An RNA of 177 nucleotides, treated with 2A3 and DMS and read out base by base. It was measured as part of the RMDB library OK1LIB. 2A3 is a SHAPE reagent: it acylates the 2'-hydroxyl of flexible nucleotides of all four kinds. Reactivities are given for positions 27 through 126. Conditions: 150 mM KOAc, 10 mM MgCl2 and 150 mM bicine (pH 8.5), 24 C. 2A3 adducts were read by reverse transcription with SuperScript II with manganese. The 2A3 profile rests on 5,599 reads. Reactivities are rounded to 0.1 and cut off at 0 and 3.
[RMDB]
RNA sequence: GGGAACGACUCGAGUAGAGUCGAAAAGCAUAAGCAAAGAUUUCUUCUCGUCCUCAGGAAGGCGCGCAAACAGCAUUGUUUUUCCAGAUUUCACCUCAGGUGAUAUGUGCGUUGCCUCUUCCCGUGCCAACACCAGCUCAUUCGUGAGCUGGUGUUGAAAAGAAACAACAACAACAAC
Reactivity to 2A3 in 0.01 (KOAc 150mM, MgCl2 10mM, bicine 150mM(pH8.5), 24C), signal-to-noise 8, nucleotides 027 to 126: g020c070a110u230a240a070g010c050a120a090a030g050a050u120u200u010c000u040u010c010u010c010g050u030c010c030u100c050a010g070g010a070a010g020g000c010g000c000g000c010a070a050a050c030a120g130c060a170u100u060g140u070u090u060u080u060c050c050a060g030a160u080u070u070c020a020c020c010u300c150a110g000g010u030g020a040u020a040u120g100u020g010c010g010u060u300g020c010c000u030c030u020u010c000c000c020g060u060g100c030
Reactivity to DMS in 0.01 (KOAc 150mM, MgCl2 10mM, bicine 150mM(pH8.5), 24C), signal-to-noise 3, nucleotides 027 to 126: g000c000a110u020a100a130g030c030a110a130a140g000a070u000u030u020c000u020u000c000u020c020g020u010c080c030u000c040a100g010g000a150a040g000g010c020g040c020g000c000a050a030a030c110a070g000c120a100u020u000g020u010u000u000u000u000c100c040a140g000a090u010u040u000c040a020c030c010u040c220a060g020g020u000g010a010u010a030u000g000u000g000c020g000u000u040g050c000c000u000c070u000u000c010c000c020g030u020g020c140